[RMDB]
RNA sequence: GGGAACGACUCGAGUAGAGUCGAAAAGCUACGCCAGAUACCAUAAUAGUCGUCUUAAAUCAAUUAUUAUCGGGAUUUAUGAUAGGGAUACAAGAGAGAAUAAUCUGGAGUCAGUACAUGACAACAGGAUGAAUUAAUUUGUUCGACAAGGAGUAUAGUAACUUCAGGUAUUCGUACCUGAAGUUACAAAAGAAACAACAACAACAAC
Reactivity to 2A3 in 0.01 (KOAc 150mM, MgCl2 10mM, bicine 150mM(pH8.5), 24C), signal-to-noise 4, nucleotides 027 to 156: g000c020u050a010c050g030c020c010a050g020a090u030a070c040c020a070u050a070a040u040a140g040u040c040g020u030c100u120u290a160a120a090u130c060a080a130u090u070a040u070u040a040u190c060g040g050g020a010u030u050u050a040u140g050a050u040a060g040g010g030a020u070a200c060a080a010g050a000g040a010g050a110a070u090a060a040u010c010u020g010g010a000g010u000c010a010g030u080a110c080a210u060g030a010c020a040a000c010a030g050g040a040u090g040a020a070u070u070a020a040u010u060u040g040u010u030c020g010a020c040a040a050g060g030a040g080u090a050u050a210
Reactivity to DMS in 0.01 (KOAc 150mM, MgCl2 10mM, bicine 150mM(pH8.5), 24C), signal-to-noise 2, nucleotides 027 to 156: g020c020u010a010c050g000c020c050a110g050a150u000a030c000c000a070u000a000a060u000a050g010u000c010g030u000c130u010u000a070a160a110u000c030a030a060u000u000a030u010u010a020u000c070g040g040g000a100u000u000u000a090u000g000a080u000a080g020g010g000a110u000a030c050a060a040g000a180g010a170g020a120a040u000a060a100u000c030u000g000g010a300g020u000c020a060g040u000a070c080a130u000g030a050c010a040a170c060a110g020g000a080u000g020a100a090u000u010a040a040u000u000u010g020u010u000c060g030a120c060a030a100g010g010a110g030u000a060u000a210

An RNA of 207 nucleotides, treated with 2A3 and DMS and read out base by base. DMS adducts were read by reverse transcription with MarathonRT. As a SHAPE reagent, 2A3 marks flexible, mostly unpaired nucleotides at the ribose 2'-OH. For 2A3, 2,070 sequencing reads were counted.